[RMDB]
RNA sequence: GGGAACGACUCGAGUAGAGUCGAAAAAGUCCAAGAACAGGAGUGACUCUCGAGGGCUCACCUGCCUGCAGGGCAGCCCCUCCCUGCAUCGAGCGGAAAUCCAUCCUGUCCAGCGCGGGGCGUGGGCCCGAUAUUAGGCUUUCGAGCCUAAUAUCGGAAAAGAAACAACAACAACAAC
Reactivity to 2A3 in 0.01 (KOAc 150mM, MgCl2 10mM, bicine 150mM(pH8.5), 24C), signal-to-noise 2, nucleotides 027 to 126: a000g060u010c020c010a060a040g060a090a010c050a030g030g040a040g070u100g040a040c030u010c020u050c150g060a170g000g030g000c040u020c030a060c000c000u050g060c000c010u020g020c030a040g000g010g000c030a030g030c020c000c010c000u010c000c000c000u020g000c000a060u090c090g050a040g020c030g020g030a080a060a010u090c050c010a050u020c010c030u010g010u000c020c030a080g010c090g020c050g090g010g010g000c010g020u070g000g040g010c020
Reactivity to DMS in 0.01 (KOAc 150mM, MgCl2 10mM, bicine 150mM(pH8.5), 24C), signal-to-noise 4, nucleotides 027 to 126: a080g000u000c010c010a070a100g010a090a100c110a040g010g010a080g020u010g010a100c040u000c040u000c080g010a160g010g010g020c120u000c040a050c070c070u010g030c020c030u000g000c020a050g010g000g020c090a040g000c020c010c010c050u000c020c000c000u010g010c060a070u000c110g010a110g010c080g010g000a070a100a110u010c130c080a090u000c050c010u000g020u000c000c020a140g000c130g000c090g030g000g010g020c190g010u000g010g020g000c090